[RMDB]
RNA sequence: GGGAACGACUCGAGUAGAGUCGAAAAAGCCUUUUCUGAAGAGUCACCAGAGAAGGGACAAAAAUGAGGCCAUAGCCUUACUGCUAAGGGACCAUGAGAGGCUUGGGGUAUAGCUGUCUGUUGAGACAGGUGCUUUACUACUUUGUAAGAUGAAGAACCUAAUGACCUAUUUCGAUAGGUCAUUAGGAAAAGAAACAACAACAACAAC
Reactivity to DMS in 0.01 (KOAc 150mM, MgCl2 10mM, bicine 150mM(pH8.5), 24C), signal-to-noise 2, nucleotides 027 to 156: a100g000c000c000u010u010u010u000c000u000g010a110a140g000a110g040u000c000a100c100c010a060g000a030g010a030a020g000g000g030a130c070a010a060a050a060a060u000g030a100g080g040c000c050a120u000a050g000c010c050u000u000a100c090u010g010c050u010a100a060g000g010g000a110c010c020a110u000g010a140g000a120g000g010c010u010u000g010g040g030g010u000a130u000a040g030c030u000g000u000c010u000g010u000u000g010a090g040a100c030a070g000g010u010g000c040u010u000u020a080c030u000a070c020u010u010u010g000u000a080a080g010a150u000g000a060a080g020a100a230
Reactivity to 2A3 in 0.01 (KOAc 150mM, MgCl2 10mM, bicine 150mM(pH8.5), 24C), signal-to-noise 4, nucleotides 027 to 156: a000g060c030c010u060u030u010u010c030u040g100a120a090g030a050g090u040c030a030c090c010a010g020a000g010a030a020g020g010g030a040c110a040a150a020a010a040u160g030a050g000g030c030c050a080u070a040g030c010c000u080u110a100c030u050g060c040u040a080a140g000g010g020a020c010c060a080u090g020a030g000a010g080g000c000u050u050g030g000g000g020u060a040u050a110g070c020u020g050u020c020u040g120u100u160g090a040g010a030c020a010g010g010u040g020c000u080u130u070a040c020u020a040c020u030u090u080g070u070a050a080g050a080u240g120a060a030g070a040a020

Chemical mapping of a 207-nucleotide RNA with DMS and 2A3. 2A3 is a SHAPE reagent: it acylates the 2'-hydroxyl of flexible nucleotides of all four kinds. For DMS, 3,973 sequencing reads were counted. For DMS the reverse transcriptase was MarathonRT. Conditions: 150 mM KOAc, 10 mM MgCl2 and 150 mM bicine (pH 8.5), 24 C.